An RNA of 177 nucleotides, treated with DMS and 2A3 and read out base by base. As a SHAPE reagent, 2A3 marks flexible, mostly unpaired nucleotides at the ribose 2'-OH. The reactions ran in a buffer of 150 mM KOAc, 10 mM MgCl2 and 150 mM bicine (pH 8.5), at 24 C. Source: RMDB library OK1LIB, as collected in RNAgym.
[RMDB]
RNA sequence: GGGAACGACUCGAGUAGAGUCGAAAAACCUUCCUAGUUGUCAGGGUUCAGCAGAGUUUUGAAUUUGCUAUGGCAUUUAGUAUUCCUUUCUUGAGCACUGGGGUGGUGACAACAAGCCAACAGGCAGAAAUCAGCUUCAGUUCGCUGAAGCUGAUUUAAAAGAAACAACAACAACAAC
Reactivity to DMS in 0.01 (KOAc 150mM, MgCl2 10mM, bicine 150mM(pH8.5), 24C), signal-to-noise 4, nucleotides 027 to 126: a070c050c050u010u020c000c050u000a080g010u020u000g000u000c020a090g010g000g000u020u020c070a070g010c070a060g000a100g020u000u020u010u010g000a040a070u010u010u010g030c020u000a080u040g010g000c080a030u020u000u020a090g010u010a070u030u000c010c020u000u010u000c040u000u000g010a080g000c010a030c010u000g000g010g000g040u000g000g020u000g010a080c120a060a070c090a140a160g010c010c010a060a060c190a060g000g020c040a130g000
Reactivity to 2A3 in 0.01 (KOAc 150mM, MgCl2 10mM, bicine 150mM(pH8.5), 24C), signal-to-noise 3, nucleotides 027 to 126: a010c010c000u040u060c040c000u050a060g030u030u040g020u050c070a040g030g050g030u070u170c040a040g030c070a070g030a080g080u040u060u090u100g120a160a180u070u060u060g010c040u080a120u140g110g020c010a010u110u070u040a030g060u060a060u020u110c010c020u000u040u060c020u040u080g060a060g040c050a000c080u010g000g070g010g010u050g020g000u090g060a000c010a070a000c010a020a030g000c010c010a040a170c020a080g000g000c000a000g120